[RMDB]
An RNA of 177 nucleotides, treated with DMS and 2A3 and read out base by base.
Source: RMDB library TTRDES, as collected in RNAgym.
RNA sequence: GGGAACGACUCGAGUAGAGUCGAAAAGAUAUGGAGAACCCAGAGGCAACAGCUACACCUCGGAAACGAGGUCGUAGACAUGCCUCGGGUUCUCCUAAGUCAAAACUCUGCCCUUCGGGGCAGAGAACUGUUAAUAACCGUUCGCGGUUAUUAACAGAAAAGAAACAACAACAACAAC
Reactivity to DMS in 0.01 (KOAc 150mM, MgCl2 10mM, bicine 150mM(pH8.5), 24C), signal-to-noise 3, nucleotides 027 to 126: g000a020u010a280u000g000g010a010g010a010a020c000c000c000a130g030a000g010g020c010a060a050c280a140g020c010u000a010c000a030c000c010u000c010g020g000a070a040a110c000g000a020g020g000u000c260g030u000a010g000a030c100a300u010g020c000c010u000c010g000g000g000u000u000c000u000c010c000u000a010a050g010u000c020a150a070a100a160c010u000c000u000g000c000c000c000u000u000c260g010g020g000g020c000a000g000a000g010a020a100
Reactivity to 2A3 in 0.01 (KOAc 150mM, MgCl2 10mM, bicine 150mM(pH8.5), 24C), signal-to-noise 3, nucleotides 027 to 126: g010a020u020a020u080g000g020a000g010a010a020c030c030c140a100g010a010g070g050c200a300a030c060a300g000c000u010a000c000a000c000c010u010c020g010g010a020a020a020c000g010a000g030g010u090c120g010u030a000g010a010c020a120u300g010c010c000u000c000g010g000g000u010u000c000u020c000c000u000a020a000g000u000c000a000a000a000a050c020u000c010u010g000c010c000c000u000u060c300g100g000g000g030c000a000g010a000g000a000a000